Source: RMDB library OK1LIB, as collected in RNAgym.
The record gives the reactivity of an RNA of 177 nucleotides to 2A3.
High 2A3 reactivity points to a flexible backbone, as in loops and unpaired stretches.
Values cover nucleotides 27 to 126.
Values are in units of 0.01, from 0 to 300, in steps of 10.
RNA sequence: GGGAACGACUCGAGUAGAGUCGAAAAUAUACAAAUAGCGAAAGCCCAACACUUGUUCAAAUGGCUACUUUAUCUUCAACAGGUAAUAAAUCCGUUUCUACUGGCAAUGCUUUAGGAUUUACUAAUAGUCACACUGUCUCUUCGGAGACAGUGUGACAAAAGAAACAACAACAACAAC
Reactivity to 2A3 in 0.01 (KOAc 150mM, MgCl2 10mM, bicine 150mM(pH8.5), 24C), signal-to-noise 1, nucleotides 027 to 126: u070a000u000a090c000a000a000a020u040a210g040c060g060a040a000a080g000c000c000c000a060a000c090a000c020u000u040g000u110u130c000a040a040a040u130g000g000c000u000a060c040u220u000u000a090u000c000u000u000c000a060a060c000a060g250g000u000a070a070u280a070a000a000u000c060c000g090u090u260u230c210u060a150c060u000g000g190c160a000a130u150g070c080u300u280u150a130g050g050a140u000u240u000a000c000u060a060a300u040a000